[RMDB]
RNA sequence: GGGAACGACUCGAGUAGAGUCGAAAAGCCACGUGCCGCGGGCCUGAGGCGCAUCGCCCUGCACAAGAGCACCUCGCAGAAGGGCGACAAGAUGUAUCUGCUGGUUUGCGAGUGCGCCGAGCUGCUGCGAGGCUGGGAUAUUCGUAUCCCAGCCUCGAAAAGAAACAACAACAACAAC
Reactivity to DMS in 0.01 (KOAc 150mM, MgCl2 10mM, bicine 150mM(pH8.5), 24C), signal-to-noise 6, nucleotides 027 to 126: g010c010c020a090c120g010u020g000c020c030g020c030g000g000g010c040c040u010g000a090g000g010c030g020c040a080u010c050g010c000c020c010u010g000c100a060c200a130a060g000a130g000c020a100c090c060u010c050g000c030a080g000a100a080g000g000g000c010g010a050c170a110a110g010a110u020g010u010a070u020c040u010g020c010u000g000g010u020u010u010g000c010g010a040g010u010g000c010g020c010c000g000a090g000c030u010g010c030u010g000
Reactivity to 2A3 in 0.01 (KOAc 150mM, MgCl2 10mM, bicine 150mM(pH8.5), 24C), signal-to-noise 9, nucleotides 027 to 126: g040c010c010a060c070g070u100g030c020c010g020c020g010g020g040c000c030u100g060a070g030g000c020g000c020a020u040c020g000c000c000c010u030g010c050a070c030a080a030g020a010g030c030a060c010c030u040c030g010c020a050g060a280a060g110g090g010c010g010a010c030a030a080g070a120u120g040u120a120u060c030u050g020c010u060g050g070u080u150u180g020c030g000a080g100u060g000c020g000c010c010g010a020g000c030u070g000c010u030g030
This 177-nucleotide RNA was probed chemically with DMS and 2A3. It was measured as part of the RMDB library OK1LIB. The DMS profile rests on 20,801 reads.